[RMDB]
Overview: The record gives the reactivity of an RNA of 207 nucleotides to 2A3 and DMS. The reactions ran in a buffer of 150 mM KOAc, 10 mM MgCl2 and 150 mM bicine (pH 8.5), at 24 C.

RNA sequence: GGGAACGACUCGAGUAGAGUCGAAAAUGAUGAAGGCUAUCCUCCUGACUUGUAGACAGCCACCUUCUCACCAUGUGAUCGUAUAGCAAAAGGAGAGAGAGAACACUCUGGUGUCCCUUCUUAUAAGGGCACUAAUUCCGUGAGGCUGGUCUCACCACUAGUCCGAUAUGUUCGCAUAUCGGACUAGAAAAGAAACAACAACAACAAC
Reactivity to 2A3 in 0.01 (KOAc 150mM, MgCl2 10mM, bicine 150mM(pH8.5), 24C), signal-to-noise 3, nucleotides 027 to 156: u130g030a010u040g050a060a010g030g010c030u030a050u130c040c010u040c000c030u040g080a080c030u080u160g040u120a030g020a050c030a020g000c010c020a040c000c020u100u060c020u010c020a070c010c020a070u080g050u040g060a070u120c140g040u210a070u210a130g080c040a040a050a080a070g040g020a060g010a000g000a000g000a000g020a060a020c070a030c030u060c040u050g040g030u030g080u200c000c010c000u070u020c090u050u170a260u050a160a010g000g000g010c010a000c030u020a010a040u130u020c050c020g010u030g020a050g050g000c080u060g010g050u040c010u000c010a050c010c000a060
Reactivity to DMS in 0.01 (KOAc 150mM, MgCl2 10mM, bicine 150mM(pH8.5), 24C), signal-to-noise 2, nucleotides 027 to 156: u000g000a030u010g000a100a070g010g030c040u000a060u010c020c010u010c000c010u020g000a090c110u000u010g000u000a080g010a120c080a050g010c110c010a180c040c000u000u020c030u000c020a110c040c050a150u000g050u000g020a150u010c060g000u000a110u010a180g060c040a050a090a130a120g000g020a130g010a060g000a100g010a140g030a070a090c050a080c040u000c050u030g020g000u000g000u000c000c010c000u020u000c130u010u000a130u010a030a030g000g010g000c020a040c000u000a030a070u000u000c030c010g030u000g000a070g030g040c040u020g020g010u000c000u000c020a080c030c010a180
It was measured as part of the RMDB library OK3TST. For 2A3 the reverse transcriptase was SuperScript II with manganese.